[RMDB]
RNA sequence: GGGAACGACUCGAGUAGAGUCGAAAAUCACGUGUAUAAUGUUCCUAUCCGUAAUAUUAUGCACAGGUAUGUUAGGAUAGAUAGACAACAUACUGCAUUAGUCAGUUGUCUACAAGAACUGACUGAAGAUAGUAUUCAGAUUCGUCUGGAUACUAUCAAAAGAAACAACAACAACAAC
Reactivity to DMS in 0.01 (KOAc 150mM, MgCl2 10mM, bicine 150mM(pH8.5), 24C), signal-to-noise 9, nucleotides 027 to 126: u020c040a130c140g010u000g010u000a000u000a000a010u000g010u000u000c040c060u020a120u040c220c160g010u020a020a010u000a010u000u000a000u000g000c000a010c020a170g010g000u010a020u010g000u000u000a070g010g010a100u010a090g010a180u030a060g000a060c040a020a010c020a060u010a030c020u010g000c210a110u020u030a030g000u000c070a040g000u000u010g000u020c070u010a050c220a090a080g000a030a060c030u000g000a030c010u000g010a090a100
Reactivity to 2A3 in 0.01 (KOAc 150mM, MgCl2 10mM, bicine 150mM(pH8.5), 24C), signal-to-noise 9, nucleotides 027 to 126: u100c030a020c130g000u000g000u000a000u000a010a010u010g010u010u020c040c030u080a200u140c070c060g020u030a010a000u010a010u030u010a000u000g000c000a000c000a000g010g030u030a010u030g010u000u040a060g040g040a070u040a090g080a080u080a050g140a100c010a010a000c010a010u020a010c000u040g070c040a130u020u060a010g000u000c010a000g000u000u010g090u090c060u080a070c040a060a030g030a030a010c000u000g010a000c000u020g020a040a010